Annotation
The record gives the reactivity of an RNA of 177 nucleotides to DMS and 2A3. Values are in units of 0.01, from 0 to 300, in steps of 10. For DMS the reverse transcriptase was MarathonRT. 2A3 adducts were read by reverse transcription with SuperScript II with manganese.
[RMDB]
RNA sequence: GGGAACGACUCGAGUAGAGUCGAAAAUACGUUGUUUUCGAACAACGUAAACAGGGACUGGUCGAAAGACCCGGGUCCUACCACGGCGGGGAGUUACUCCAACUCUCCAGCGUUUCGACGCUGGAGACAGUCUUAGGCUAUUCGUAGCCUAAGACUGAAAAGAAACAACAACAACAAC
Reactivity to DMS in 0.01 (KOAc 150mM, MgCl2 10mM, bicine 150mM(pH8.5), 24C), signal-to-noise 3, nucleotides 027 to 126: u000a000c010g020u010u000g000u000u000u000u000c210g000a010a010c000a010a000c000g010u000a000a040a120c190a090g010g010g000a020c010u000g010g020u000c000g000a100a110a170g010a020c020c020c300g020g000g010u000c000c000u000a090c010c020a090c150g020g000c110g000g000g000g000a130g010u010u000a080c050u020c080c060a110a140c160u010c000u000c000c000a000g010c000g020u000u000u000c130g020a060c010g010c000u010g000g000a010g000a020
Reactivity to 2A3 in 0.01 (KOAc 150mM, MgCl2 10mM, bicine 150mM(pH8.5), 24C), signal-to-noise 2, nucleotides 027 to 126: u030a010c010g010u000u010g000u010u000u030u090c250g070a030a000c010a010a000c010g000u000a020a110a010c050a070g000g000g040a000c010u040g030g010u000c000g020a090a020a060g000a000c010c000c010g090g000g020u000c000c010u000a030c010c020a040c020g120g020c080g000g020g000g000a060g070u060u070a090c010u020c020c020a050a100c010u000c000u000c010c000a000g000c000g000u020u040u120c190g090a010c010g000c000u000g010g000a000g010a000